[RMDB]
RNA sequence: GGGAACGACUCGAGUAGAGUCGAAAACACGAAUAGAAGGAUGCCAGCUCACGGCACGACUCACCGCGUCGUUGAGCGUCAGGCUACCGGGAGCGGCAGCGCUCAGCGGCAGAUCGGCAACCGCGCCACGAACCUGUAGAUUCGUCUACAGGUUCGUAAAAGAAACAACAACAACAAC
Reactivity to 2A3 in 0.01 (KOAc 150mM, MgCl2 10mM, bicine 150mM(pH8.5), 24C), signal-to-noise 6, nucleotides 027 to 126: c100a010c050g090a060a100u190a190g090a110a030g070g030a020u060g020c010c010a030g030c030u030c040a020c020g000g000c010a020c030g040a030c010u070c080a060c020c040g010c020g010u000c000g010u030u050g010a000g000c020g040u080c050a030g070g000c000u030a050c010c010g010g020g020a030g020c010g040g000c050a040g030c030g010c000u020c020a010g010c000g030g000c010a030g020a110u090c030g030g000c010a020a030c020c010g030c020g030c030c010
Reactivity to DMS in 0.01 (KOAc 150mM, MgCl2 10mM, bicine 150mM(pH8.5), 24C), signal-to-noise 4, nucleotides 027 to 126: c080a130c160g000a090a040u030a040g020a220a060g020g000a080u010g020c010c040a180g000c010u010c020a010c080g010g000c060a050c020g000a120c080u060c150a100c100c030g020c120g000u010c000g020u000u000g000a020g000c000g010u010c090a300g000g010c020u000a130c010c000g020g010g020a050g000c020g000g040c220a150g000c000g010c020u000c030a060g000c000g030g020c030a030g010a050u000c040g010g020c020a130a100c080c040g000c070g020c030c080